RNA sequence: GGGAACGACUCGAGUAGAGUCGAAAAGGUAUCCACUUCGGUGGAUACCAAAGGCGAUCCCAGCAUCAGGGUACAACAACAAUAGAUGCAUCCCUAACGCCAAAAUUCCGGAUUUCGAUCCGGAAAACUCUAAUACGCAAUUCGUUGCGUAUUAGAGAAAAGAAACAACAACAACAAC
Reactivity to DMS in 0.01 (KOAc 150mM, MgCl2 10mM, bicine 150mM(pH8.5), 24C), signal-to-noise 3, nucleotides 027 to 126: g030g020u000a010u010c000c000a000c000u000u000c200g040g030u000g000g000a000u000a000c000c010a010a050a080g000g010c000g000a140u000c010c010c000a120g010c030a030u000c040a150g000g000g030u000a090c130a090a100c200a090a070c100a070a050u000a130g020a050u010g010c010a090u000c010c000c010u000a290a210c050g010c020c010a080a050a120a110u000u000c000c000g000g000a030u000u000u010c210g010a010u010c000c000g000g000a000a010a080a110
Reactivity to 2A3 in 0.01 (KOAc 150mM, MgCl2 10mM, bicine 150mM(pH8.5), 24C), signal-to-noise 5, nucleotides 027 to 126: g010g000u010a000u000c000c000a000c010u030u040c200g110g000u010g000g010a000u000a000c000c000a010a040a000g010g010c010g020a040u020c010c000c020a010g000c000a010u030c010a030g150g030g070u290a100c050a170a010c010a050a020c020a100a220u080a180g030a020u020g000c010a080u040c010c010c010u030a060a030c010g010c000c010a050a050a020a050u060u010c010c010g000g010a010u050u040u110c150g060a020u050c000c000g000g000a030a000a000a000